[RMDB]
RNA sequence: GGGAACGACUCGAGUAGAGUCGAAAAGCGGGAGGUUAAGCGGCUUUCAACGCUGGUCGCAGCGCACAUUGAUAUGAUUUUUAUCCAGCUUUGCGGUGAGAUGCUGACCGAUGAAUUAGCUUCUCCCAUCGUAAUACUGGAGCUCUAUCGUCGUGUGUACGCGGUCAAUUUUCGAAUUGACCGCGUAAAAAGAAACAACAACAACAAC
Reactivity to 2A3 in 0.01 (KOAc 150mM, MgCl2 10mM, bicine 150mM(pH8.5), 24C), signal-to-noise 1, nucleotides 027 to 156: g090c050g000g070g000a060g000g000u150u120a190a000g030c010g070g030c040u170u170u160c200a240a060c060g020c010u090g020g020u090c020g000c050a030g050c020g000c050a030c000a060u070u230g020a050u110a030u130g030a010u020u000u020u150u110a150u010c000c020a020g010c030u090u000u030g040c000g010g020u000g000a000g000a030u020g000c070u050g020a040c140c050g120a170u070g000a070a210u100u000a000g000c000u030u000c010u010c030c100c000a010u020c000g020u020a010a020u000a220c070u040g020g000a010g020c060u060c010u100a020u010c000g100u000c050g000u000g000u000g010
Record summary: An RNA of 207 nucleotides, treated with 2A3 and read out base by base. Reactivities are rounded to 0.1 and cut off at 0 and 3. The data come from the RNA Mapping Database (RMDB), library OK3TST. As a SHAPE reagent, 2A3 marks flexible, mostly unpaired nucleotides at the ribose 2'-OH. Conditions: 150 mM KOAc, 10 mM MgCl2 and 150 mM bicine (pH 8.5), 24 C.